[RMDB]
RNA sequence: GGGAACGACUCGAGUAGAGUCGAAAAAGGACUGAGAGAGAAGAGCUAGUCGAAGAGAGCUGAAGCUCUAGAGUCGAUCCUUCCUCUCUUCGAAGGAGAUCGAGACUGAAGCUUCCUAGCUAGAGGAAGAGCUCUUCCUUCGAAGUCGAAGGACUAGAGUUUAUAGAGAGUUCGCUCUCUAUAAACUAAAAGAAACAACAACAACAAC
Reactivity to DMS in 0.01 (KOAc 150mM, MgCl2 10mM, bicine 150mM(pH8.5), 24C), signal-to-noise 1, nucleotides 027 to 156: a100g000g000a070c030u020g020a300g000a080g020a020g010a050a040g000a060g000c060u010a010g050u000c020g000a150a130g010a190g000a110g000c020u000g030a050a120g000c010u000c010u000a020g010a130g030u020c000g000a100u000c060c010u010u010c020c010u010c200u000c130u000u000c040g000a040a000g020g010a080g040a100u000c050g000a170g000a260c020u000g000a070a100g000c000u010u010c010c080u000a100g010c010u000a120g000a150g000g010a030a060g000a080g020c030u010c000u000u000c000c010u010u000c010g000a150a080g000u000c030g010a080a060g000g020a070c030u000a080g010
Reactivity to 2A3 in 0.01 (KOAc 150mM, MgCl2 10mM, bicine 150mM(pH8.5), 24C), signal-to-noise 3, nucleotides 027 to 156: a000g120g000a010c010u030g010a020g000a010g000a010g000a060a000g020a000g000c030u050a010g050u060c060g070a160a020g100a070g040a010g070c070u090g040a030a010g030c010u020c010u030a030g010a010g130u030c010g000a000u020c010c030u020u030c000c020u040c010u010c110u190u150c120g050a030a020g010g000a020g000a030u040c040g000a010g050a090c060u060g010a080a010g030c000u010u010c020c050u040a040g000c010u040a020g010a040g210g070a070a010g000a000g030c000u000c000u010u000c000c000u030u030c000g000a010a000g000u000c000g010a070a020g060g020a000c040u040a040g070

Source information
Structure probing data (DMS and 2A3) for a 207-nucleotide construct. For 2A3, 1,860 sequencing reads were counted. The data come from the RNA Mapping Database (RMDB), library OK3TST. Conditions: 150 mM KOAc, 10 mM MgCl2 and 150 mM bicine (pH 8.5), 24 C.